[RMDB]
An RNA of 177 nucleotides, treated with DMS and 2A3 and read out base by base. For 2A3, 2,922 sequencing reads were counted.
RNA sequence: GGGAACGACUCGAGUAGAGUCGAAAAAAAAAAAAGAUAUGGAGCAACGGGAGUUAUAGGUGUAUGCUCGGAAACGAGCAUAUUUCGACCUAUUAACGAAGAACGUUGCUCCUAAGUCAAAAAAAAACAUAAUAACGUUGUUCGCAACGUUAUUAUGAAAAGAAACAACAACAACAAC
Reactivity to DMS in 0.01 (KOAc 150mM, MgCl2 10mM, bicine 150mM(pH8.5), 24C), signal-to-noise 2, nucleotides 027 to 126: a000a000a000a050a040a030a040a060g000a020u010a300u000g000g000a030g000c000a010a000c000g000g020g010a100g010u000u000a010u010a000g000g020u000g010u000a020u000g000c010u000c000g000g020a050a100a140c000g010a010g000c000a000u000a000u000u010u000c300g010a050c000c010u000a030u010u000a020a030c030g000a050a150g000a080a170c020g000u000u000g000c000u010c000c000u000a010a070g000u010c040a000a000a000a040a050a080a070a140a210
Reactivity to 2A3 in 0.01 (KOAc 150mM, MgCl2 10mM, bicine 150mM(pH8.5), 24C), signal-to-noise 1, nucleotides 027 to 126: a010a010a010a000a050a000a300a110g060a010u110a040u120g000g000a030g000c000a000a010c030g000g080g000a060g010u130u080a050u040a050g010g010u020g010u000a000u000g000c010u000c000g000g000a010a060a010c000g020a000g000c030a000u010a030u030u150u100c070g080a020c000c000u010a020u270u150a070a000c050g030a240a020g030a020a000c000g000u010u000g000c000u000c000c000u000a030a010g020u020c010a000a000a000a000a000a080a060a040a040